[RMDB]
RNA sequence: GGGAACGACUCGAGUAGAGUCGAAAAGCUGAUCUUAUAGCCAUGAAUCACACUGACUUCAUCAUCACCAGUACCUUCCAAGAGAUUGCUGGAAGUAAGGACACUGUUGGUCAGUAUGAGAGUCACAGCCUACGAAACAUUUCGAUGUUUCGUAGGCAAAAGAAACAACAACAACAAC
Reactivity to 2A3 in 0.01 (KOAc 150mM, MgCl2 10mM, bicine 150mM(pH8.5), 24C), signal-to-noise 1, nucleotides 027 to 126: g010c020u000g040a070u030c040u080u120a080u170a160g030c050c010a070u080g080a030a050u080c030a030c010a000c130u020g010a010c010u060u000c070a050u010c010a000u040c000a010c040c000a020g030u040a050c010c000u010u000c000c000a100a020g080a060g030a300u100u300g100c040u020g010g000a000a010g020u040a090a050g020g020a040c020a000c070u050g040u050u020g030g000u010c020a020g020u040a030u040g070a070g010a010g030u020c020a000c010a090
Reactivity to DMS in 0.01 (KOAc 150mM, MgCl2 10mM, bicine 150mM(pH8.5), 24C), signal-to-noise 3, nucleotides 027 to 126: g010c020u000g000a070u020c050u010u000a110u000a060g050c090c070a120u000g010a100a130u030c030a060c060a060c110u000g000a080c000u010u020c080a040u000c100a040u010c090a060c040c020a040g030u010a080c190c010u010u020c030c040a070a090g000a130g000a110u000u000g000c090u000g000g020a070a040g000u000a080a120g000g000a080c160a020c090u000g010u000u000g000g020u000c060a060g050u000a050u000g020a050g010a130g000u000c030a090c160a130
Structure probing data (2A3 and DMS) for a 177-nucleotide construct.
Source: RMDB library OK2TST, as collected in RNAgym.
Values are in units of 0.01, from 0 to 300, in steps of 10.
For 2A3 the reverse transcriptase was SuperScript II with manganese.
Values cover nucleotides 27 to 126.
The DMS profile rests on 1,696 reads.
The RNA was probed in 150 mM KOAc, 10 mM MgCl2 and 150 mM bicine (pH 8.5) at 24 C.